[RMDB]
RNA sequence: GGGAACGACUCGAGUAGAGUCGAAAAGUCUACGCAAUAGCACAUGCUCUGCGUGUUCUGUACUCUUUCCGAGGCCAGCAAAGGUCAGUGAGGAGACAGAAAAUCCUCAGUCAAGAGUCAUGGAAGGUCAUAACCGGGUCUUCGGACCCGGUUAUGAAAAAGAAACAACAACAACAAC
Reactivity to 2A3 in 0.01 (KOAc 150mM, MgCl2 10mM, bicine 150mM(pH8.5), 24C), signal-to-noise 1, nucleotides 027 to 126: g030u030c040u090a020c040g000c050a030a070u080a220g090c060a040c040a170u140g000c000u010c000u090g010c020g010u040g100u080u000c010u010g150u100a300c010u000c020u060u300u000c010c020g070a300g010g000c000c000a120g090c100a250a080a170g020g000u020c010a030g000u000g040a000g000g000a010g000a040c000a000g010a010a020a000a020u030c000c000u040c000a030g090u070c040a070a050g040a010g040u060c040a040u060g020g060a110a060g000g050
Reactivity to DMS in 0.01 (KOAc 150mM, MgCl2 10mM, bicine 150mM(pH8.5), 24C), signal-to-noise 2, nucleotides 027 to 126: g010u000c070u000a060c020g030c070a010a060u010a020g010c060a220c190a040u000g010c010u000c160u000g000c050g000u020g010u000u040c010u000g030u000a120c030u000c010u000u000u030c060c030g000a250g010g010c010c020a040g020c300a040a140a070g000g000u010c000a090g000u010g010a030g000g000a000g020a060c020a010g000a030a030a110a070u010c040c030u010c050a110g000u020c100a110a020g000a040g040u020c040a060u020g000g020a120a080g000g010